An RNA of 177 nucleotides, treated with DMS and read out base by base. For DMS, 6,237 sequencing reads were counted. The RNA was probed in 150 mM KOAc, 10 mM MgCl2 and 150 mM bicine (pH 8.5) at 24 C.
RNA sequence: GGGAACGACUCGAGUAGAGUCGAAAAGAUAUGGAUAUCGAACUACUUCUAAGCGAAGCGUUGAAAGUACUUAUAUCGGAAACGAUAUAAGUACUGGAGCUUCGAACGCGAAGCGAUAUCCUAAGUCCAUACUUACUUGCUUCGGCAAGUAAGUAUGAAAAGAAACAACAACAACAAC
Reactivity to DMS in 0.01 (KOAc 150mM, MgCl2 10mM, bicine 150mM(pH8.5), 24C), signal-to-noise 5, nucleotides 027 to 126: g000a080u000a240u010g000g000a010u000a010u000c000g000a090a080c120u000a300c000u000u010c000u010a300a150g010c010g010a020a000g010c010g010u000u010g010a170a100a030g020u000a000c000u000u000a000u000a000u000c010g000g000a120a040a160c000g000a010u000a010u000a010a000g010u000a000c000u000g000g020a070g000c000u000u000c000g010a010a030c130g020c240g010a010a000g000c010g010a020u000a000u000c000c010u010a030a070g000u000c030